An RNA of 177 nucleotides, treated with DMS and 2A3 and read out base by base. For 2A3 the reverse transcriptase was SuperScript II with manganese. For DMS, 2,904 sequencing reads were counted.
RNA sequence: GGGAACGACUCGAGUAGAGUCGAAAAGGAACUUACCCGACAAGGAAUUUCGCUACCUUAGGAUGGUUAUAGUUACCACCGCCGUUUACUGGGGCUUAAAUUCUCAGCUUCGCCUUGCGGCUAACCGAUAAACUAGCAUCUUCGGAUGCUAGUUUAUAAAAGAAACAACAACAACAAC
Reactivity to DMS in 0.01 (KOAc 150mM, MgCl2 10mM, bicine 150mM(pH8.5), 24C), signal-to-noise 3, nucleotides 027 to 126: g000g010a070a040c020u000u000a080c060c010c000g010a100c170a030a020g010g000a140a090u000u000u000c130g010c150u010a070c010c010u000u000a080g010g000a110u000g010g000u000u000a060u000a040g010u000u010a060c030c030a130c100c060g000c010c010g000u000u000u000a060c080u000g000g010g010g030c060u010u010a030a050a100u010u000c080u000c040a090g010c090u000u000c070g010c100c030u010u010g000c070g010g000c030u010a050a120c050c060g010
Reactivity to 2A3 in 0.01 (KOAc 150mM, MgCl2 10mM, bicine 150mM(pH8.5), 24C), signal-to-noise 2, nucleotides 027 to 126: g000g000a060a000c010u000u010a050c010c000c000g030a030c040a050a000g050g020a120a070u150u250u130c110g060c070u130a100c010c000u020u040a050g010g040a090u100g080g000u070u020a080u090a180g030u020u030a210c020c020a020c050c010g000c010c010g030u020u060u050a000c040u070g010g010g000g020c000u090u100a100a130a180u290u060c110u000c020a010g010c030u070u020c030g040c110c000u020u040g030c040g000g000c000u050a090a040c010c020g030
The RNA was probed in 150 mM KOAc, 10 mM MgCl2 and 150 mM bicine (pH 8.5) at 24 C. For DMS the reverse transcriptase was MarathonRT. The 2A3 profile rests on 1,235 reads.